[RMDB]
RNA sequence: GGGAACGACUCGAGUAGAGUCGAAAAGAAAGAAAGAAAGCUGACCCUUCUGCUGACGGAUCUUGUGGAGCACCACAGUGCAGAAGGGGAGAGAAGCUUUAAUGCCGACCGUCUGGGCAGCCUUGAAAACAGUGUGUUACUUCGGUAACACACUGUUAAAAGAAACAACAACAACAAC
Reactivity to 2A3 in 0.01 (KOAc 150mM, MgCl2 10mM, bicine 150mM(pH8.5), 24C), signal-to-noise 4, nucleotides 027 to 126: g090a020a070a030g160a050a050a000g180a010a050a010g000c030u050g130a110c000c000c000u000u000c000u000g020c020u040g050a060c050g060g020a070u070c060u110u070g010u030g020g020a100g180c080a060c090c000a020c000a030g040u040g000c000a010g000a010a000g000g000g000g000a020g010a000g000a050a000g000c000u000u050u020a100a050u110g000c000c000g030a090c000c000g020u030c010u050g000g010g000c000a020g030c020c000u030u080g070a190a160
Reactivity to DMS in 0.01 (KOAc 150mM, MgCl2 10mM, bicine 150mM(pH8.5), 24C), signal-to-noise 4, nucleotides 027 to 126: g000a120a160a100g010a070a040a120g000a080a020a020g010c010u000g010a190c000c000c000u020u010c000u000g010c000u010g010a060c120g010g010a110u020c070u010u020g020u010g000g000a300g010c300a120c010c000a030c010a040g000u010g020c000a000g010a000a020g000g010g000g000a020g000a090g010a100a030g000c010u000u000u030a050a080u010g020c030c010g010a080c030c020g000u010c020u000g000g000g010c040a080g000c110c000u000u000g010a090a070
Record summary: Source: RMDB libraries RFM100 and RFMREP, as collected in RNAgym. The record gives the reactivity of an RNA of 177 nucleotides to 2A3 and DMS. The reactions ran in a buffer of 150 mM KOAc, 10 mM MgCl2 and 150 mM bicine (pH 8.5), at 24 C. High DMS reactivity at an A or C suggests that its Watson-Crick edge is free. Values cover nucleotides 27 to 126.